[RMDB]
RNA sequence: GGGAACGACUCGAGUAGAGUCGAAAAUUUAAACUUGUGGGUUUUAUCCUUCACAAUUGAGCAUAGCAUGAAUGAAUGAAGCCUCAAGAUGGUCACACUGAGUCCCAUGGAUGAGACUAAGGUCAAUAGCAUCAGAACUUUAGUGUUAGCAUUUUCCCACACCAUAUGCUUUCGAGCAUAUGGUGUGAAAAGAAACAACAACAACAAC
Reactivity to 2A3 in 0.01 (KOAc 150mM, MgCl2 10mM, bicine 150mM(pH8.5), 24C), signal-to-noise 3, nucleotides 027 to 156: u070u050u070a070a050a010c020u030u000g030u110g020g030g000u010u040u030u070a020u010c030c000u010u030c030a030c060a070a130u130u190g080a090g030c070a130u090a090g030c020a030u030g040a040a040u060g020a060a020u080g010a040a000g030c020c000u060c010a010a020g030a060u020g080g050u040c050a000c000a000c050u020g020a030g030u010c040c070c020a050u120g060g000a040u050g020a000g000a050c000u040a110a150g030g000u000c030a090a130u120a110g090c000a050u080c020a000g050a100a070c020u060u100u190a080g010u000g020u060u030a020g060c030a110u020u020u020u110c020c000
Reactivity to DMS in 0.01 (KOAc 150mM, MgCl2 10mM, bicine 150mM(pH8.5), 24C), signal-to-noise 1, nucleotides 027 to 156: u010u000u010a100a080a170c020u030u000g030u010g020g000g060u000u010u000u000a030u020c040c010u000u000c020a060c040a070a250u000u000g000a180g050c140a180u000a060g000c130a120u000g000a070a030u000g000a040a050u000g020a090a040g000c010c010u000c000a060a130g000a080u000g020g010u000c090a040c040a090c040u000g010a130g010u010c050c010c020a100u000g000g020a160u000g040a160g010a070c010u000a050a040g060g040u000c020a120a140u000a160g030c070a090u000c010a040g000a040a060c010u000u010u010a060g040u010g000u000u000a090g110c060a150u000u000u000u000c000c010
Chemical mapping of a 207-nucleotide RNA with 2A3 and DMS.
The RNA was probed in 150 mM KOAc, 10 mM MgCl2 and 150 mM bicine (pH 8.5) at 24 C.
For DMS the reverse transcriptase was MarathonRT.